Description:
The data come from the RNA Mapping Database (RMDB), library OK2TRN. Chemical mapping of a 177-nucleotide RNA with 2A3 and DMS. DMS adducts were read by reverse transcription with MarathonRT. 2A3 adducts were read by reverse transcription with SuperScript II with manganese. The reactions ran in a buffer of 150 mM KOAc, 10 mM MgCl2 and 150 mM bicine (pH 8.5), at 24 C. For DMS, 862 sequencing reads were counted. For 2A3, 716 sequencing reads were counted.
RNA sequence: GGGAACGACUCGAGUAGAGUCGAAAAAAGAACUGCACUUCUGAAUGUCAUGUUUUUUCAGUUCUAUUAAAACUUGACAGUAACAUAAAGGCAAGCAUACCUCAUCAUUGAUGAAAUUUAUUUGAGAUAUCGUAUCAGCUUUCGAGCUGAUACGAUAAAAAGAAACAACAACAACAAC
Reactivity to 2A3 in 0.01 (KOAc 150mM, MgCl2 10mM, bicine 150mM(pH8.5), 24C), signal-to-noise 1, nucleotides 027 to 126: a000a000g030a010a000c070u030g000c030a010c110u070u040c080u080g110a230a000u020g010u020c020a010u000g020u000u020u000u000u000u050c050a070g070u000u050c090u040a170u130u090a030a030a000a000c000u000u030g000a020c020a040g010u070a130a000c000a010u060a050a130a050g030g000c070a010a010g000c000a070u130a100c000c010u000c000a000u000c030a020u020u280g000a000u010g000a050a020a070u270u300u050a240u100u050u090g040a100g000a040
Reactivity to DMS in 0.01 (KOAc 150mM, MgCl2 10mM, bicine 150mM(pH8.5), 24C), signal-to-noise 1, nucleotides 027 to 126: a170a080g000a150a090c100u000g000c150a050c050u030u010c200u010g000a080a050u000g010u000c010a010u020g000u000u000u000u000u010u000c120a090g030u010u020c120u010a110u000u000a060a000a000a000c010u000u000g000a010c010a000g000u020a090a100c050a040u000a020a050a060g000g010c020a040a070g010c050a040u000a040c040c040u000c030a000u010c040a130u000u010g000a070u000g010a070a060a090u000u000u000a080u030u010u000g020a070g010a120